[RMDB]
RNA sequence: GGGAACGACUCGAGUAGAGUCGAAAAGAUAUGGAACGCAUACGGGAGCUAUGGGUCGGAAACGACCUUAUAGCAUCGAUCGUAGCGUUCCUAAGUCAAAACUCCCGGAGCUUCGGCUCCGGGAGAACAGAAUGGUUAGGUUCGCCUAACCAUUCUGAAAAGAAACAACAACAACAAC
Reactivity to 2A3 in 0.01 (KOAc 150mM, MgCl2 10mM, bicine 150mM(pH8.5), 24C), signal-to-noise 3, nucleotides 027 to 126: g000a010u000a010u090g000g000a000a010c010g000c050a040u030a120c000g000g020g120a280g010c000u000a000u000g010g010g000u020c000g000g030a030a000a000c010g010a000c010c020u090u160a020u010a000g000c000a030u130c100g140a130u040c000g000u000a010g000c010g000u000u000c000c000u010a000a000g000u000c000a040a010a150a300c000u000c000c000c000g010g000a030g000c110u300u300c300g130g000c000u000c000c000g000g000g000a000g000a000a000
Reactivity to DMS in 0.01 (KOAc 150mM, MgCl2 10mM, bicine 150mM(pH8.5), 24C), signal-to-noise 3, nucleotides 027 to 126: g000a030u000a050u000g000g000a000a010c000g000c000a070u000a010c010g040g000g010a120g040c000u010a010u010g000g000g010u010c010g020g000a030a030a030c000g010a010c010c000u000u010a000u010a000g040c010a250u010c270g000a070u010c000g000u010a020g000c000g010u000u000c000c000u000a000a110g010u000c000a100a130a170a220c020u000c000c000c010g010g030a040g030c000u000u010c300g040g010c010u000c000c000g000g010g010a000g010a030a080